[RMDB]
RNA sequence: GGGAACGACUCGAGUAGAGUCGAAAAGAUAUGGAGGGCGCUUUUGACGGCUGAGUAUCGGAAACGAUACGAAGCCGAUAAGCGUUUCCUAAGUCAAAACAGAACAGAGGUUCGCCUCUGUUCUGAACUCAAUGAUUACCUUCGGGUAAUCAUUGAGAAAAGAAACAACAACAACAAC
Reactivity to DMS in 0.01 (KOAc 150mM, MgCl2 10mM, bicine 150mM(pH8.5), 24C), signal-to-noise 3, nucleotides 027 to 126: g010a070u000a300u010g010g010a080g020g010g000c010g020c000u000u010u000u000g030a150c100g010g000c000u000g000a300g000u000a010u000c000g000g020a090a080a210c010g030a010u010a000c000g000a240a020g000c010c000g020a030u000a000a000g010c000g020u000u010u010c010c000u000a080a230g010u000c080a080a100a120a210c020a020g000a020a000c000a010g020a010g000g010u000u010c300g010c000c000u000c010u000g000u010u010c000u000g000a000a140
Reactivity to 2A3 in 0.01 (KOAc 150mM, MgCl2 10mM, bicine 150mM(pH8.5), 24C), signal-to-noise 2, nucleotides 027 to 126: g010a010u080a040u180g030g010a030g030g110g040c000g010c040u120u110u100u200g270a170c060g010g000c020u000g040a000g010u030a000u000c000g010g000a070a050a020c010g000a000u020a000c040g000a010a000g010c030c000g010a000u000a000a000g010c000g000u010u030u020c010c000u040a100a040g030u040c020a000a020a110a240c000a000g000a010a000c000a010g010a000g040g100u060u110c250g150c040c010u000c000u000g000u010u000c000u000g000a000a000

An RNA of 177 nucleotides, treated with DMS and 2A3 and read out base by base. Source: RMDB library TTRDEL, as collected in RNAgym. The RNA was probed in 150 mM KOAc, 10 mM MgCl2 and 150 mM bicine (pH 8.5) at 24 C.